Structure probing data (2A3 and DMS) for a 177-nucleotide construct. For DMS the reverse transcriptase was MarathonRT. It was measured as part of the RMDB library M2PK50. For DMS, 2,186 sequencing reads were counted. The RNA was probed in 150 mM KOAc, 10 mM MgCl2 and 150 mM bicine (pH 8.5) at 24 C.

RNA sequence: GGGAACGACUCGAGUAGAGUCGAAAACAGAUGAUGUUCGCAUCAUCUGAAAUAAAAGCCAUGCAGGAAGGAAGGAGCAUGGCAACCAACCAACCAAAUUAAAAAUCUGUUCCUUCGGGAACAGAAACUCCAAUAUGUAGUUCGCUACAUAUUGGAGAAAAGAAACAACAACAACAAC
Reactivity to 2A3 in 0.01 (KOAc 150mM, MgCl2 10mM, bicine 150mM(pH8.5), 24C), signal-to-noise 8, nucleotides 027 to 126: c000a000g000a000u010g000a000u010g020u060u080c200g010c090a000u000c000a000u000c000u000g010a000a020a000u060a000a050a010a010g000c000c000a000u010g010c010a040g190g170a260a030g110g040a070a040g040g050a130g000c000a000u010g000g000c000a000a010c010c010a010a020c010c010a000a020c010c030a060a050a070u170u190a100a200a060a030a080u020c000u000g000u010u000c010c000u000u030c230g060g000g000a000a000c000a000g000a010a000a000
Reactivity to DMS in 0.01 (KOAc 150mM, MgCl2 10mM, bicine 150mM(pH8.5), 24C), signal-to-noise 3, nucleotides 027 to 126: c000a030g000a010u000g000a010u000g040u000u030c240g040c000a000u000c010a000u000c000u000g000a010a060a050u000a090a070a120a130g020c010c000a000u000g000c000a080g000g000a150a120g010g000a130a090g010g000a160g010c000a000u000g010g000c000a010a030c090c090a080a120c110c070a050a060c110c080a070a070a110u010u000a040a100a050a120a090u000c000u000g010u000u000c000c000u000u010c210g020g000g000a010a000c010a000g000a010a030a090